[RMDB]
RNA sequence: GGGAACGACUCGAGUAGAGUCGAAAAAGCAAGUGAGAAUGCAUUGUGUAAAUGAUCAUAGCACAGUGCUUUUCUGUACGUCUCAGGUCGGAUUUCCUGGCAGCAGACCCUGAGACAGAGGGUCACAUCGGUACACGUCAUUCGUGACGUGUACCGAAAAAGAAACAACAACAACAAC
Reactivity to 2A3 in 0.01 (KOAc 150mM, MgCl2 10mM, bicine 150mM(pH8.5), 24C), signal-to-noise 1, nucleotides 027 to 126: a000g100c120a130a040g040u050g060a080g030a090a030u120g000c000a000u040u000g030u000g030u060a140a130a180u170g100a090u180c110a040u120a070g040c000a000c010a000g010u000g000c000u120u040u010u000c000u040g040u050a040c010g020u010c000u000c000a020g000g040u010c050g050g000a100u120u030u080c040c020u100g160g000c080a070g020c000a040g050a040c000c020c010u030g000a010g010a070c000a020g130a000g030g020g030u020c030a000c020a110
Reactivity to DMS in 0.01 (KOAc 150mM, MgCl2 10mM, bicine 150mM(pH8.5), 24C), signal-to-noise 2, nucleotides 027 to 126: a060g030c150a130a130g000u000g000a020g030a070a050u000g000c010a000u010u010g010u010g010u000a060a050a070u010g000a110u000c130a040u000a260g050c010a010c020a030g030u000g030c000u010u000u020u010c020u000g010u000a060c150g020u000c000u000c000a050g010g000u000c000g030g000a120u000u000u000c020c000u000g040g020c080a130g020c140a060g010a060c040c030c010u000g000a060g010a060c070a050g010a080g010g020g010u000c130a050c180a070